Background
This 177-nucleotide RNA was probed chemically with DMS and 2A3. DMS adducts were read by reverse transcription with MarathonRT.
[RMDB]
RNA sequence: GGGAACGACUCGAGUAGAGUCGAAAAGUCUCGCACCUUUCCACCGGUGGCGGCGCGUCGUUGGAAUACCUUGAGGGCAAGACGCUACCCGGGAUCGAGGUACUAGGUCGUGAGCAGCCAAGGGGAGCGUCCCACUACGGUUCGCCGUAGUGGGACGAAAAGAAACAACAACAACAAC
Reactivity to DMS in 0.01 (KOAc 150mM, MgCl2 10mM, bicine 150mM(pH8.5), 24C), signal-to-noise 1, nucleotides 027 to 126: g000u120c000u000c000g090c100a140c030c030u000u040u090c020c010a070c030c040g000g000u000g000g000c020g040g010c090g000c300g000u000c010g020u020u000g000g000a110a090u070a030c040c040u000u010g010a140g020g000g010c000a050a260g080a000c070g000c010u000a120c110c000c080g000g000g000a060u010c090g020a010g000g090u000a120c210u000a070g000g030u000c050g090u000g020a000g010c170a140g130c000c070a030a050g000g000g010g020a200g000
Reactivity to 2A3 in 0.01 (KOAc 150mM, MgCl2 10mM, bicine 150mM(pH8.5), 24C), signal-to-noise 3, nucleotides 027 to 126: g000u010c000u000c020g010c000a030c000c000u040u090u050c020c100a160c070c040g010g100u080g030g000c020g040g000c000g000c000g040u000c020g130u100u110g020g060a210a090u180a230c030c010u040u130g140a110g050g060g010c020a040a010g120a030c020g000c050u090a110c000c020c010g000g050g020a100u130c050g010a070g010g030u070a170c180u080a030g000g020u000c080g030u030g050a020g000c030a010g000c030c000a030a060g020g020g000g000a060g060

Conditions: 150 mM KOAc, 10 mM MgCl2 and 150 mM bicine (pH 8.5), 24 C.
Reactivities are given for positions 27 through 126.
Source: RMDB library OK1LIB, as collected in RNAgym.